[RMDB]
RNA sequence: GGGAACGACUCGAGUAGAGUCGAAAACAGCCCAACGUUAGGGGCACGAAAGGUGCACCGAGUAAUAGGUUCACCAUGGUGGCUAACGAUAGAACUUUCGCGUUGGUCGGAAGAGCAGCGGUAUAGUGCGAAGGUUAUACUGAUGGACUAGGCUGACGCAUGUAGGUCUCUUCGGAGACCUACAUGCAAAAGAAACAACAACAACAAC
Reactivity to 2A3 in 0.01 (KOAc 150mM, MgCl2 10mM, bicine 150mM(pH8.5), 24C), signal-to-noise 1, nucleotides 027 to 156: c050a020g000c000c000c020a080a010c060g010u000u010a010g000g030g160g000c000a020c020g270a150a130a000g050g000u000g000c020a000c000c000g000a000g050u140a120a240u190a170g000g010u000u000c000a000c000c000a040u110g020g000u000g020g010c000u010a000a000c010g030a010u040a040g100a010a010c020u030u040u040c010g030c000g070u100u040g030g000u010c010g010g070a090a020g010a130g030c000a000g020c000g030g070u130a190u040a020g080u070g130c060g030a070a020g070g010u000u000a080u060a050c040u080g000a070u050g020g040a040c020u080a050g070g000c040u020g020a010c130